[RMDB]
RNA sequence: GGGAACGACUCGAGUAGAGUCGAAAAAUACCUAUUCGUAGGUAUCUGGUGCGUACUACUCUUCUUUUGACGCUCUUAGGAUGGAGUCCCAAAUAGGACGAUGAAAUCCUAGAGAGCGAUAAGAAGAGUAUCGCUUUUCAUGGGUUUCGACCCAUAAACAUCAGAUUAGUUUCGACUAAUCUGAUGUAAAAGAAACAACAACAACAAC
Reactivity to 2A3 in 0.01 (KOAc 150mM, MgCl2 10mM, bicine 150mM(pH8.5), 24C), signal-to-noise 7, nucleotides 027 to 156: a000u020a020c010c000u040a040u040u080c260g050u040a010g000g010u010a030u020c110u160g200g060u150g030c020g030u100a090c060u010a000c010u030c000u020u010c010u090u100u050u120g250a130c010g000c000u000c000u000u010a000g010g000a000u020g000g000a010g000u010c000c010c020a160a260a060u300a100g010g000a010c030g010a030u020g010a030a010a000u000c000c000u020a050g030a000g000a000g130c000g000a000u040a000a000g000a000a000g010a000g000u000a000u030c010g000c010u040u020u030u060c050a020u020g000g000g030u040u100u140c220g100a100c000c000c010a010u090a020a130
Reactivity to DMS in 0.01 (KOAc 150mM, MgCl2 10mM, bicine 150mM(pH8.5), 24C), signal-to-noise 4, nucleotides 027 to 156: a050u000a020c000c000u000a050u000u000c260g030u000a020g000g010u000a000u000c040u000g010g020u000g020c030g010u000a120c100u000a020c000u000c000u000u000c010u010u000u000u010g020a220c080g030c010u000c020u000u000a040g010g000a050u010g010g000a260g010u000c010c000c010a050a160a220u000a050g010g020a030c000g000a150u010g000a110a110a030u000c000c000u000a070g030a010g020a020g040c010g000a020u000a010a030g010a030a030g000a060g000u000a000u000c020g000c030u000u000u000u000c100a110u000g020g010g010u000u000u010c150g010a180c000c000c000a010u000a030a150